[RMDB]
Background:
Structure probing data (2A3 and DMS) for a 177-nucleotide construct.

RNA sequence: GGGAACGACUCGAGUAGAGUCGAAAAGAAACCUUCCUUGGCAAUGCGGAGAUUCUCGAAGUCUUCAACAUCACCAAGGUUGGCAAGGUGGCCGGUUGCCGCGUCACCGAAGGCAAGGUCGAGCGUAUACUACGUAUGCUUUCGAGCAUACGUAGUAAAAAGAAACAACAACAACAAC
Reactivity to 2A3 in 0.01 (KOAc 150mM, MgCl2 10mM, bicine 150mM(pH8.5), 24C), signal-to-noise 3, nucleotides 027 to 126: g050a030a080a010c000c000u000u010c010c000u010u000g010g000c030a040a020u010g010c020g010g000a000g000a020u060u010c120u100c170g190a300a010g020u000c020u020u000c010a110a100c000a030u030c020a000c010c000a000a000g000g000u000u010g020g020c030a070a030g010g010u020g010g000c010c000g030g060u200u170g150c060c010g010c100g020u030c010a030c020c000g020a050a020g030g000c040a050a020g070g060u020c010g050a030g020c070g040u060a050
Reactivity to DMS in 0.01 (KOAc 150mM, MgCl2 10mM, bicine 150mM(pH8.5), 24C), signal-to-noise 5, nucleotides 027 to 126: g000a090a150a160c010c010u000u000c000c000u000u000g010g010c050a120a010u000g010c300g020g000a010g010a030u000u000c070u000c280g000a140a040g020u000c010u000u000c010a070a120c030a010u000c100a100c010c010a010a010g000g010u000u000g020g020c060a090a070g010g030u000g000g000c020c010g010g010u000u000g020c030c010g010c140g000u000c010a020c010c010g010a060a120g020g000c070a060a080g000g000u000c030g000a050g000c040g010u000a110
The DMS profile rests on 6,908 reads. 2A3 adducts were read by reverse transcription with SuperScript II with manganese. Values cover nucleotides 27 to 126.